[RMDB]
RNA sequence: GGGAACGACUCGAGUAGAGUCGAAAAGCAUGUUUAUGUGAACCUAAGCAUGAAUCUCAGUGACUGUAGAUUAGAAGGACUGAUUAUAGCAUAGGCUGCUUGGUGUUCACUUUAUUUGCAUCUGUGAGUUUCCAACAAGCCCUAAGUUUACUGACAAAUUUUAUUACCGGUUCGCCGGUAAUAAAAUAAAAGAAACAACAACAACAAC
Reactivity to DMS in 0.01 (KOAc 150mM, MgCl2 10mM, bicine 150mM(pH8.5), 24C), signal-to-noise 2, nucleotides 027 to 156: g040c000a040u000g010u000u000u000a020u010g020u010g020a060a100c050c040u010a020a080g030c010a080u000g010a060a080u000c070u010c060a130g030u000g010a140c050u010g030u000a110g010a100u010u000a070g010a100a160g020g000a200c030u000g010a090u000u000a070u000a100g010c060a120u000a120g000g030c070u000g000c040u000u000g000g000u000g040u000u020c020a050c050u000u010u000a030u020u000u010g020c010a170u000c100u000g030u000g000a140g000u000u010u020c020c020a100a100c050a110a080g000c040c000c000u020a040a210g010u010u000u000a070c030u020g000a060c040a040a140
Reactivity to 2A3 in 0.01 (KOAc 150mM, MgCl2 10mM, bicine 150mM(pH8.5), 24C), signal-to-noise 3, nucleotides 027 to 156: g010c010a010u040g020u010u090u110a150u210g000u030g000a010a010c010c030u000a000a010g000c000a020u130g090a240a170u070c070u020c060a060g040u030g120a270c010u040g040u120a060g050a260u100u030a030g080a250a060g090g040a040c000u010g010a020u010u130a060u110a070g020c050a030u050a120g090g000c030u020g000c000u000u000g000g020u070g000u050u010c000a000c000u030u050u010a040u010u010u040g030c030a040u030c040u030g050u030g100a090g080u050u090u010c030c020a030a010c020a040a040g030c010c000c000u060a120a010g030u030u060u200a200c030u040g010a020c060a010a230